RNA sequence: GGGAACGACUCGAGUAGAGUCGAAAAACCGGCGUGAAUUCGACGCGCGCCGUCAGGUCCGGUUCGGCAAUUCGGCUCAUCAGCAGGUCGACCGUCUGUUCGGCCUGGAUGUCGCAGGGUUGGCGGAUGGUCGUGAGGUCGUAAGCGGCCCAGGCCGAUAGACAGGGGGAUUCGUCCCCCUGUCUAUAAAAGAAACAACAACAACAAC
Reactivity to 2A3 in 0.01 (KOAc 150mM, MgCl2 10mM, bicine 150mM(pH8.5), 24C), signal-to-noise 3, nucleotides 027 to 156: a000c010c000g010g000c010g020u080g010a030a220u190u200c170g070a020c020g020c000g020c010g000c080c010g040u040c060a070g000g090u040c030c040g070g040u070u080c030g020g040c010a040a060u040u010c000g030g010c000u020c040a110u020c030a050g190c010a040g020g020u010c000g020a030c010c030g140u070c110u120g120u130u050c010g000g010c010c010u030g000g030a100u070g040u090c080g000c030a040g000g000g040u010u040g020g070c010g020g020a060u070g070g000u030c050g080u040g040a110g030g010u020c010g030u040a150a100g080c030g000g010c010c020c000a010g000g050c000c000g000
Reactivity to DMS in 0.01 (KOAc 150mM, MgCl2 10mM, bicine 150mM(pH8.5), 24C), signal-to-noise 1, nucleotides 027 to 156: a040c070c000g040g000c030g060u000g000a080a130u000u000c050g010a140c110g020c020g000c040g000c050c030g000u000c030a070g010g030u000c040c030g030g040u000u010c010g060g010c020a060a260u000u000c030g010g010c010u000c010a110u010c030a160g000c020a050g040g030u010c000g030a020c040c060g000u000c060u010g010u000u000c020g000g000c030c010u000g010g000a060u010g020u000c080g000c020a080g020g010g000u000u000g020g020c000g000g000a080u020g040g000u000c030g060u010g000a090g040g030u010c010g020u000a150a210g050c030g000g000c030c010c010a110g000g000c000c020g040
The record gives the reactivity of an RNA of 207 nucleotides to 2A3 and DMS. The DMS profile rests on 3,270 reads. The RNA was probed in 150 mM KOAc, 10 mM MgCl2 and 150 mM bicine (pH 8.5) at 24 C.